[RMDB]
RNA sequence: GGGAACGACUCGAGUAGAGUCGAAAAUCUUUGCGUGUGUGCGACAGCCUUCUCAGGGCCCCACCUUUGGAAUAAAAGGUACUAGUGAGACUGGACCAUGGGUGGUGACAGGGGACCUGCUUCUCCUUCAGUCCUCCCAGGCCCACGCAACCUAUGAAUUAAUUAGUACUUUCGAGUACUAAUUAAUAAAAGAAACAACAACAACAAC
Reactivity to DMS in 0.01 (KOAc 150mM, MgCl2 10mM, bicine 150mM(pH8.5), 24C), signal-to-noise 3, nucleotides 027 to 156: u000c010u010u000u010g010c000g010u000g040u000g070u010g030c030g030a120c040a100g020c010c010u010u000c030u000c050a150g010g020g030c010c040c040c080a050c010c070u000u000u000g030g040a250a180u000a100a060a090a100g010g010u000a090c050u000a090g010u010g020a110g010a070c020u010g010g010a120c030c040a070u000g020g020g030u000g010g020u000g030a050c090a040g000g010g010g000a030c070c050u000g010c120u000u010c030u010c010c010u000u000c050a110g010u000c000c030u000c010c020c010a100g020g020c000c020c000a030c020g020c010a040a060c080c020u010a070u000g010a140
Reactivity to 2A3 in 0.01 (KOAc 150mM, MgCl2 10mM, bicine 150mM(pH8.5), 24C), signal-to-noise 3, nucleotides 027 to 156: u050c030u050u030u020g000c000g000u020g000u030g040u070g040c060g080a120c100a060g030c010c020u120u080c080u070c070a040g040g030g030c060c020c040c010a010c010c000u040u010u040g080g060a150a080u140a190a220a030a010g030g000u020a050c050u070a050g090u020g090a090g020a070c050u060g020g030a060c030c060a100u040g000g000g010u030g010g010u030g010a010c080a040g000g000g000g000a000c020c060u070g040c080u130u040c010u020c000c000u030u040c020a080g060u010c000c000u020c010c010c000a020g070g000c000c000c000a000c000g010c000a020a030c010c010u160a180u180g060a040